[RMDB]
RNA sequence: GGGAACGACUCGAGUAGAGUCGAAAACAUAUGUUGACAGCAAGUAUCAUUAUUACGCAAUUAGAAGAGAUUGGUAUUACAAGUGACUUAAAAGUUGCGAUUGAGUCGUUUAUUAAGGCCACCAAAUCAUGCAAUUGUAGUGCAAAUGAAAUAUUAAAAAUCAUUUUGACUUCGGUCAAAAUGAUUUAAAAGAAACAACAACAACAAC
Reactivity to DMS in 0.01 (KOAc 150mM, MgCl2 10mM, bicine 150mM(pH8.5), 24C), signal-to-noise 1, nucleotides 027 to 156: c110a220u010a100u020g020u010u000g020a140c120a150g000c050a080a100g000u000a080u010c040a030u010u010a130u000u000a100c070g040c000a040a110u000u000a110g000a060a070g000a130g050a100u000u020g020g020u000a020u000u010a070c030a040a110g040u000g010a020c010u000u000a040a100a060a120g000u000u010g020c030g020a160u000u010g020a140g020u010c010g000u000u000u010a070u020u000a050a060g000g000c010c030a050c020c010a010a030a080u010c030a000u000g000c020a030a050u000u010g010u000a070g030u000g020c110a030a040a090u000g000a030a020a100u020a080u020u010a020a070
Reactivity to 2A3 in 0.01 (KOAc 150mM, MgCl2 10mM, bicine 150mM(pH8.5), 24C), signal-to-noise 1, nucleotides 027 to 156: c000a020u150a010u150g010u060u020g090a030c060a030g100c110a130a030g030u060a050u090c010a040u000u110a030u120u070a060c050g000c030a010a050u010u040a070g080a220a010g030a030g010a070u050u030g040g000u090a050u070u180a030c000a050a030g020u000g030a000c000u000u020a000a080a050a020g030u080u050g000c090g040a050u060u090g020a010g080u030c010g020u050u000u060a100u050u070a110a000g040g000c030c000a000c000c000a000a020a110u110c090a070u090g070c000a000a060u060u040g010u090a180g000u020g010c000a070a070a020u000g060a000a130a000u120a000u020u110a040a190